An RNA of 207 nucleotides, treated with DMS and 2A3 and read out base by base. In probing experiments dimethyl sulfate is read out at A N1 and C N3, which are open when not base-paired. It was measured as part of the RMDB library OK3TST. Reactivities are rounded to 0.1 and cut off at 0 and 3. For DMS, 2,062 sequencing reads were counted.
RNA sequence: GGGAACGACUCGAGUAGAGUCGAAAAUAACAAUAAUGUUACUUGUUAUACAGUCUAUAUUCACAUUUUGCCAACUUUUGCAAUGCGAGCUUUUGAUGGCAAUUUUUCCAACCCAGGAUCCAAUCCAGGAUCGUAUAUUGCAUAUAAUCGACAUGUCAAUCCUCAUGAAUUUCGAUUCAUGAGGAUUAAAAGAAACAACAACAACAAC
Reactivity to DMS in 0.01 (KOAc 150mM, MgCl2 10mM, bicine 150mM(pH8.5), 24C), signal-to-noise 1, nucleotides 027 to 156: u010a030a080c030a050a070u010a090a130u010g000u000u030a050c140u010u000g030u010u010a130u000a130c060a120g000u000c060u000a110u000a140u000u020c080a080c140a090u010u000u020u000g030c020c010a040a150c030u030u000u000u000g010c000a080a070u000g020c140g020a120g030c070u000u010u020u000g020a120u030g010g030c020a020a020u000u000u000u000u000c030c040a080a100c060c040c050a130g040g010a050u000c030c030a110a130u010c140c140a110g010g000a000u000c010g030u030a130u000a030u000u000g020c000a030u010a100u010a030a040u000c070g020a030c060a010u010g010u000c090
Reactivity to 2A3 in 0.01 (KOAc 150mM, MgCl2 10mM, bicine 150mM(pH8.5), 24C), signal-to-noise 2, nucleotides 027 to 156: u020a000a010c040a010a060u250a190a070u140g040u130u080a070c010u050u050g020u010u000a050u040a090c040a060g030u010c030u120a080u050a060u240u200c050a030c030a130u040u070u140u040g010c020c000a010a010c120u020u090u080u060g020c020a040a090u110g030c040g050a050g040c040u100u090u030u060g020a040u020g020g000c000a000a000u120u010u010u070u020c010c020a040a040c070c000c010a040g120g000a010u020c020c010a020a060u090c040c040a010g000g000a000u000c000g000u010a050u030a040u050u110g000c000a010u070a020u090a300a060u300c040g020a010c020a010u030g280u300c040